[RMDB]
RNA sequence: GGGAACGACUCGAGUAGAGUCGAAAAUACUGUCUGAUGACGGUGUCGUUUGCUAUAAUAGUGAUUAUGCAGCUAAGGGUUACAUUGCUGGAAUACAGAAUUUUAAGGAAACGCUGUAUUAUCAGAAGCUUAUACGUGUCUUCGGACACGUAUAAGCAAAAGAAACAACAACAACAAC
Reactivity to 2A3 in 0.01 (KOAc 150mM, MgCl2 10mM, bicine 150mM(pH8.5), 24C), signal-to-noise 1, nucleotides 027 to 126: u060a000c010u000g000u000c010u130g290a160u220g040a070c050g000g000u010g000u010c040g010u000u110u070g100c000u070a020u020a300a050u080a180g150u080g050a010u000u010a010u040g000c010a020g020c000u020a050a010g070g010g040u080u070a040c030a080u110u110g050c000u030g020g050a020a050u130a030c020a010g030a020a020u070u070u100u070a110a070g080g010a040a030a040c020g000c020u050g000u010a020u010u020a040u060c000a000g000a110a050
Reactivity to DMS in 0.01 (KOAc 150mM, MgCl2 10mM, bicine 150mM(pH8.5), 24C), signal-to-noise 1, nucleotides 027 to 126: u030a040c040u020g020u020c000u000g010a190u000g000a060c020g010g030u000g010u000c090g000u010u000u010g000c000u000a010u000a110a070u010a130g010u010g010a110u000u000a030u000g000c020a040g020c040u030a100a120g020g010g000u030u000a060c260a110u010u000g020c010u010g000g000a050a060u000a030c000a000g000a080a030u000u010u000u020a000a210g030g000a050a030a060c300g030c010u000g000u000a030u000u000a030u000c020a030g000a130a050
Background:
Conditions: 150 mM KOAc, 10 mM MgCl2 and 150 mM bicine (pH 8.5), 24 C. Structure probing data (2A3 and DMS) for a 177-nucleotide construct. The 2A3 profile rests on 645 reads. 2A3 is a SHAPE reagent: it acylates the 2'-hydroxyl of flexible nucleotides of all four kinds. DMS adducts were read by reverse transcription with MarathonRT. Source: RMDB library 15KREP, as collected in RNAgym.